Description
The record gives the reactivity of an RNA of 177 nucleotides to DMS and 2A3. DMS (dimethyl sulfate) methylates the pairing face of unpaired adenines and cytosines. DMS adducts were read by reverse transcription with MarathonRT.

RNA sequence: GGGAACGACUCGAGUAGAGUCGAAAACGGCUGCUCUUCUUUCUCUUUCGUCGUCAUCCUUGGCUAACCGCUCAAGUUCCUCCUCUUCCUCUCGGCUGAGGUGCUUCCCUCCCGCGGCCAGCUGCUUAUGUAUAUGAGAGUUCGCUCUCAUAUACAUAAAAGAAACAACAACAACAAC
Reactivity to DMS in 0.01 (KOAc 150mM, MgCl2 10mM, bicine 150mM(pH8.5), 24C), signal-to-noise 5, nucleotides 027 to 126: c120g010g020c040u010g010c040u000c030u000u000c040u000u000u000c030u000c020u000u000u000c070g010u000c060g010u000c050a090u010c050c020u000u000g010g010c050u010a090a120c110c060g020c050u000c070a080a110g010u000u010c010c010u000c020c020u010c020u000u000c010c010u000c060u000c100g010g010c040u000g010a070g000g020u000g010c060u000u000c010c010c010u000c020c010c030g020c060g020g010c010c030a090g010c070u010g010c100u000u000
Reactivity to 2A3 in 0.01 (KOAc 150mM, MgCl2 10mM, bicine 150mM(pH8.5), 24C), signal-to-noise 3, nucleotides 027 to 126: c010g040g010c020u020g020c020u030c020u090u050c000u020u100u030c020u000c000u020u090u040c050g040u010c020g020u020c020a060u060c030c000u020u020g020g010c020u030a050a050c010c020g020c030u040c070a040a060g020u050u020c010c000u000c010c000u000c020u040u020c010c000u030c010u020c020g040g000c030u020g020a010g010g040u040g010c020u040u040c000c010c010u010c000c000c010g000c010g000g000c000c010a000g010c010u050g010c000u030u020